Description:
This 177-nucleotide RNA was probed chemically with 2A3 and DMS. High 2A3 reactivity points to a flexible backbone, as in loops and unpaired stretches. 2A3 adducts were read by reverse transcription with SuperScript II with manganese. Conditions: 150 mM KOAc, 10 mM MgCl2 and 150 mM bicine (pH 8.5), 24 C. The DMS profile rests on 3,042 reads.

[RMDB]
RNA sequence: GGGAACGACUCGAGUAGAGUCGAAAAGACGGGAUGCCCCGACAGCUCCCGGACGGCUAUCAGACCGUCAAUCGAGCGGAUGCUGUCAGCGAUCUGAUGCGCCCGUUGAAGGUCGCGGUGGAUGCGACAGCCGUGAGUGAUUCGUCACUCACGGCUGAAAAGAAACAACAACAACAAC
Reactivity to 2A3 in 0.01 (KOAc 150mM, MgCl2 10mM, bicine 150mM(pH8.5), 24C), signal-to-noise 3, nucleotides 027 to 126: g020a010c020g030g000g020a090u100g000c010c000c020c030g010a010c010a000g000c000u000c010c000c000g010g000a000c000g010g010c040u110a110u300c100a070g240a300c000c010g020u000c000a010a140u240c080g080a030g060c140g020g020a040u170g000c000u000g000u000c020a000g020c050g070a080u060c070u180g060a110u120g020c020g020c020c000c020g000u000u070g040a060a010g070g010u010c020g000c040g040g080u190g080g040a060u120g030c010g040a030
Reactivity to DMS in 0.01 (KOAc 150mM, MgCl2 10mM, bicine 150mM(pH8.5), 24C), signal-to-noise 3, nucleotides 027 to 126: g020a050c010g020g000g020a060u010g020c010c030c040c080g000a020c020a030g010c000u000c000c000c000g050g020a020c010g010g000c030u000a120u020c240a120g010a240c000c000g010u000c000a130a090u020c170g010a110g010c150g000g000a040u020g010c010u010g000u000c000a060g010c060g010a090u000c180u010g000a140u010g000c020g000c000c010c020g020u000u000g010a140a090g000g010u000c010g030c010g010g040u010g000g000a130u010g000c000g010a070